[RMDB]
RNA sequence: GGGAACGACUCGAGUAGAGUCGAAAAGGUGCGUGUACUGCAGGGACAUGUUCAACCACGAGGAGAACCGCCGGGGCCACUGCCAGGACGCGCCCGACUCCGUGAGAACUUGCAUCCGCCGGGUGAGCUGCAUGUGGUGCGCGGACAGCAUGCUCUACUGCAUUUACUGGUUCGCCAGUAAAUGCAGAAAAGAAACAACAACAACAAC
Reactivity to 2A3 in 0.01 (KOAc 150mM, MgCl2 10mM, bicine 150mM(pH8.5), 24C), signal-to-noise 2, nucleotides 027 to 156: g040g000u090g030c010g000u040g000u050a040c010u000g000c000a020g030g020g040a080c060a090u150g030u060u060c070a050a110c070c000a050c110g080a150g090g000a070g030a100a050c030c010g170c100c050g110g000g110g000c000c000a140c070u000g060c030c030a020g010g000a000c000g000c000g030c050c000c010g040a050c020u010c000c020g040u110g040a070g030a050a100c030u060u070g000c010a030u030c010c040g020c040c060g040g060g000u110g030a030g000c000u040g000c090a100u100g020u050g130g040u070g000c100g000c040g030g000a010c010a020g030c000a020u030g020c000u050c030u080a100
Source information: This 207-nucleotide RNA was probed chemically with 2A3. The RNA was probed in 150 mM KOAc, 10 mM MgCl2 and 150 mM bicine (pH 8.5) at 24 C. Values cover nucleotides 27 to 156.